[RMDB]
RNA sequence: GGGAACGACUCGAGUAGAGUCGAAAAUAAAAUAGCGUAAUGGACAUUGGGAGUGUACGCUAAGUGUGUGUUGAAUACCUAAGGUGCAAUUGAACACACACACAGUUGCACCUAAUGUCCAAAAAAACGUAUUCAAAUGAUUCGUCAUUUGAAUACGAAAAGAAACAACAACAACAAC
Reactivity to DMS in 0.01 (KOAc 150mM, MgCl2 10mM, bicine 150mM(pH8.5), 24C), signal-to-noise 5, nucleotides 027 to 126: u010a040a070a120a090u010a090g020c100g010u000a100a160u000g000g000a010c000a010u010u010g010g010g000a100g020u010g020u000a010c140g020c050u000a090a190g010u000g020u000g010u000g010u000u000g000a030a010u000a070c010c020u020a090a120g030g030u000g010c060a030a030u000u000g000a010a010c000a010c020a020c020a010c030a060c260a020g000u000u000g000c010a050c000c000u000a010a010u000g000u000c000c010a010a000a030a050a030a030a030
Reactivity to 2A3 in 0.01 (KOAc 150mM, MgCl2 10mM, bicine 150mM(pH8.5), 24C), signal-to-noise 4, nucleotides 027 to 126: u210a000a050a010a050u120a050g140c050g050u080a140a080u090g010g000a000c000a010u010u030g010g030g020a120g140u100g040u040a010c090g030c070u040a220a230g000u010g010u000g000u000g000u020u010g180a030a020u040a040c030c050u120a190a150g120g010u070g030c020a040a000u000u030g050a030a000c000a000c000a000c000a000c000a000c020a060g000u040u060g030c020a010c010c000u000a010a000u000g000u010c010c000a040a020a010a000a000a000a010